Chemical mapping of a 207-nucleotide RNA with DMS and 2A3. The reactions ran in a buffer of 150 mM KOAc, 10 mM MgCl2 and 150 mM bicine (pH 8.5), at 24 C. The data come from the RNA Mapping Database (RMDB), library M2RFPK.
RNA sequence: GGGAACGACUCGAGUAGAGUCGAAAACCUGUUAUCUGACCAAUAACAGAAUGCACCACAGCGUAAAAUCAUCUGAUUGGGUGAGUUUGUCGCACCGCCAUUUGACGAACGAACGCCAAGCCUAAGCACUACGAGUAUGUGUUCGCACAUACUCGAAGUCUCUAAAGAGUUUCGACUCUUUAGAGACAAAAGAAACAACAACAACAAC
Reactivity to DMS in 0.01 (KOAc 150mM, MgCl2 10mM, bicine 150mM(pH8.5), 24C), signal-to-noise 2, nucleotides 027 to 156: c080c020u000g040u000u000a040u000c010u010g010a140c090c090a180a020u000a010a020c020a040g000a100a120u000g030c030a150c040c020a050c030a070g000c030g000u010a060a050a040a090u010c030a050u000c080u000g050a160u000u000g000g050g040u000g020a110g000u060u000u010g020u000c000g060c040a080c070c020g050c030c050a160u010u010u000g000a060c000g010a100a080c090g040a070a090c030g000c040c030a060a090g010c040c010u000a090a070g000c090a130c010u000a180c000g020a030g020u000a010u000g020u000g000u000u000c300g010c030a030c000a030u000a010c000u000c000g010a020a050
Reactivity to 2A3 in 0.01 (KOAc 150mM, MgCl2 10mM, bicine 150mM(pH8.5), 24C), signal-to-noise 7, nucleotides 027 to 156: c010c000u000g000u010u020a010u020c020u020g030a050c020c020a050a050u020a030a000c010a010g080a080a090u130g010c030a030c040c010a030c040a020g040c000g050u080a000a050a050a080u060c040a020u020c040u100g080a160u070u140g040g010g010u030g020a060g030u000u050u060g050u040c030g000c040a060c060c030g070c030c030a080u080u040u170g030a020c010g010a050a020c020g020a040a010c050g070c040c020a030a030g020c010c010u100a090a020g050c050a060c140u140a050c060g000a000g000u010a000u000g010u000g020u030u060c090g040c050a000c000a000u000a000c000u000c000g000a010a000